[RMDB]
RNA sequence: GGGAACGACUCGAGUAGAGUCGAAAAGGAUCCGGAUCCGUCCUCACAUAGCGAAUCAGGAUCCAGGCGUCAUAGGUAGACGGAUCCAUCCUUCCUAUACAGAGGAUCCUCGACCGUCACUAAGAUACUAUAUGUAGAGCUUCGGCUCUACAUAUAGAAAAGAAACAACAACAACAAC
Reactivity to 2A3 in 0.01 (KOAc 150mM, MgCl2 10mM, bicine 150mM(pH8.5), 24C), signal-to-noise 4, nucleotides 027 to 126: g010g000a010u050c090c050g010g010a010u020c000c000g040u030c060c020u190c010a130c020a080u200a030g040c030g040a030a050u090c060a060g020g010a010u000c000c010a020g050g050c050g050u100c030a090u080a140g000g100u090a040g020a010c020g000g030a030u010c000c000a020u000c010c000u050u050c020c020u080a100u030a100c080a020g080a020g040g020a020u030c000c020u020c020g040a030c010c010g030u030c010a010c070u090a070a040g050a170u180a110
Reactivity to DMS in 0.01 (KOAc 150mM, MgCl2 10mM, bicine 150mM(pH8.5), 24C), signal-to-noise 6, nucleotides 027 to 126: g010g010a010u000c070c070g020g000a020u000c010c000g020u000c040c090u010c210a090c170a110u010a120g000c020g010a060a050u000c060a070g000g000a020u000c010c010a080g000g020c090g010u000c080a080u010a060g010g030u010a070g020a010c030g010g020a060u000c010c060a080u000c020c010u000u000c050c030u000a090u010a090c260a100g000a100g000g000a030u010c050c020u000c080g000a090c040c010g010u000c060a050c050u000a060a070g000a090u000a150
Overview: Structure probing data (2A3 and DMS) for a 177-nucleotide construct. Source: RMDB library OK2TST, as collected in RNAgym. For 2A3, 6,222 sequencing reads were counted. The DMS profile rests on 7,130 reads. The RNA was probed in 150 mM KOAc, 10 mM MgCl2 and 150 mM bicine (pH 8.5) at 24 C. DMS adducts were read by reverse transcription with MarathonRT.